[RMDB]
RNA sequence: GGGAACGACUCGAGUAGAGUCGAAAAGCCGCGGCGUUGUGAUUGGCGAUGGUGAACCCGGGCUGAACUCGGCUGGCUCGGUCAGCAAACAAUUCGACUGCUUCGUCGGUUAUCGACAUCGACGGUAUGAUGAUGGAUGCUUCGGCAUCCAUCAUCAAAAAGAAACAACAACAACAAC
Reactivity to DMS in 0.01 (KOAc 150mM, MgCl2 10mM, bicine 150mM(pH8.5), 24C), signal-to-noise 1, nucleotides 027 to 126: g010c010c040g010c020g010g020c130g040u020u000g040u020g000a040u010u020g000g000c010g010a060u000g020g000u000g020a150a060c130c010c010g000g010g020c000u010g000a070a220c110u000c110g000g000c060u010g000g000c040u050c030g050g000u000c010a060g000c000a090a070a110c180a090a060u000u000c030g010a180c050u020g000c040u000u000c010g010u000c050g040g010u000u000a300u010c130g000a040c060a030u000c010g000a070c030g000g020u020a020
The record gives the reactivity of an RNA of 177 nucleotides to DMS.
It was measured as part of the RMDB library OK2TRN.
DMS adducts were read by reverse transcription with MarathonRT.
Conditions: 150 mM KOAc, 10 mM MgCl2 and 150 mM bicine (pH 8.5), 24 C.
For DMS, 744 sequencing reads were counted.